[RMDB]
RNA sequence: GGGAACGACUCGAGUAGAGUCGAAAAGGAAGGAAAUUAAGGAAAGGAGGGCCAUCCCACACCCGAGCCAAGGAAUGUGGAUUUCCACCUACAUGGAUUGGGCAUACCUGGUACCAAAAGGCAUUAGCAAAGGAAUUAAUCGGUGCCUAGCCGUAAAAUCGCUUUUAAAUUUCGAUUUAAAAGCGAUAAAAGAAACAACAACAACAAC
Reactivity to 2A3 in 0.01 (KOAc 150mM, MgCl2 10mM, bicine 150mM(pH8.5), 24C), signal-to-noise 4, nucleotides 027 to 156: g030g030a010a000g010g020a020a070a050u140u110a110a060g010g020a090a060a020g020g020a010g010g000g030c020c000a040u040c010c020c000a010c000a000c000c010c010g000a020g000c020c030a040a030g020g020a120a080u090g020u040g010g070a080u060u070u080c010c020a040c020c010u090a100c040a090u100g020g010a040u060u070g040g010g000c000a020u030a090c000c010u020g040g010u070a090c030c050a010a060a040a020g020g000c020a040u100u100a040g030c050a060a040a040g010g040a030a030u070u060a100a080u140c010g000g010u000g010c020c020u020a020g040c020c010g000u020a030a030a000
Reactivity to DMS in 0.01 (KOAc 150mM, MgCl2 10mM, bicine 150mM(pH8.5), 24C), signal-to-noise 3, nucleotides 027 to 156: g020g010a110a040g010g010a060a050a090u010u000a060a160g020g000a050a090a130g030g020a090g000g030g030c040c060a110u000c000c000c020a180c130a060c050c010c010g000a080g010c030c020a040a110g000g000a070a090u000g020u000g020g000a260u000u010u000c010c000a110c020c050u000a100c030a090u000g010g000a080u000u010g020g000g020c040a120u000a070c020c010u010g020g000u000a100c040c030a030a050a080a120g000g010c040a050u000u000a080g000c060a040a060a080g000g010a080a060u000u010a110a080u010c020g010g010u010g010c020c040u000a080g010c000c020g030u000a050a050a090
Source: RMDB library OK3TST, as collected in RNAgym. Chemical mapping of a 207-nucleotide RNA with 2A3 and DMS. For 2A3 the reverse transcriptase was SuperScript II with manganese. The 2A3 profile rests on 3,998 reads. The reactions ran in a buffer of 150 mM KOAc, 10 mM MgCl2 and 150 mM bicine (pH 8.5), at 24 C.